[RMDB]
RNA sequence: GGGAACGACUCGAGUAGAGUCGAAAAGUGUGCUAUACUAGUAAGGUUGAAUAAAUCAACCCUUGGUGCUUAGCUUCUUUCACCAAGCAUAUUACACGCGGAUAACCGCCAAAGGAGAAAAGAUGAACUGCCCGACGAUUCUUCGGAAUCGUCGGAAGAGAACUCAAUGGUUCGCCAUUGAGUUCUCAAAAGAAACAACAACAACAAC
Reactivity to 2A3 in 0.01 (KOAc 150mM, MgCl2 10mM, bicine 150mM(pH8.5), 24C), signal-to-noise 2, nucleotides 027 to 156: g030u020g020u020g060c050u130a120u080a300c080u090a070g140u110a160a080g000g020u000u000g020a080a110u160a190a150a140u060c020a000a000c000c000c000u010u020g000g010u010g000c060u090u090a050g020c000u040u060c000u000u020u030c000a000c000c000a010a000g010c020a020u020a050u160u090a050c060a010c020g010c010g000g030a050u080a260a180c000c020g000c040c040a060a100a000g060g020a020g010a020a160a020a040g080a020u140g030a060a070c050u080g050c000c010c000g000a000c010g000a000u000u020c000u030u060c140g040g010a020a010u000c010g000u000c000g000g000a000a010